[RMDB]
RNA sequence: GGGAACGACUCGAGUAGAGUCGAAAAGAAGAGAGACGCUCUUUCGUCUGCCCGGCAAACUGCGGAUCCUGCAUUUUUACUGACAGCACAUAGGCGCAGCGAUCCCAGAUAUCUUCCGCCGACAGCACCCUAGUCAUCCAUUCGUGGAUGACUAGGGAAAAGAAACAACAACAACAAC
Reactivity to DMS in 0.01 (KOAc 150mM, MgCl2 10mM, bicine 150mM(pH8.5), 24C), signal-to-noise 2, nucleotides 027 to 126: g020a110a030g000a100g030a140g010a060c130g000c230u000c010u000u010u000c030g020u020c020u000g000c050c040c020g010g010c060a080a090a110c050u000g020c190g030g010a050u000c010c000u000g000c010a040u000u000u000u010u000a120c190u000g000a140c080a070g010c080a100c090a090u000a050g000g010c130g010c000a010g000c160g000a020u010c010c000c000a010g000a060u000a060u010c160u000u010c070c060g020c030c020g020a100c030a040g040c220a290
Reactivity to 2A3 in 0.01 (KOAc 150mM, MgCl2 10mM, bicine 150mM(pH8.5), 24C), signal-to-noise 2, nucleotides 027 to 126: g030a040a020g070a000g020a010g010a010c080g060c100u000c000u050u090u020c010g040u000c010u010g060c060c020c000g000g010c040a040a040a060c030u040g040c150g040g020a000u000c000c000u000g030c050a050u060u050u060u130u120a100c110u110g130a060c060a080g070c090a110c010a130u230a070g110g000c060g000c030a010g000c080g020a000u000c000c010c000a010g010a010u100a050u020c090u150u000c040c080g030c000c000g020a020c010a020g050c000a070

Chemical mapping of a 177-nucleotide RNA with DMS and 2A3. Reactivities are given for positions 27 through 126. For DMS the reverse transcriptase was MarathonRT. The reactions ran in a buffer of 150 mM KOAc, 10 mM MgCl2 and 150 mM bicine (pH 8.5), at 24 C. Source: RMDB library OK2TST, as collected in RNAgym. For DMS, 1,131 sequencing reads were counted.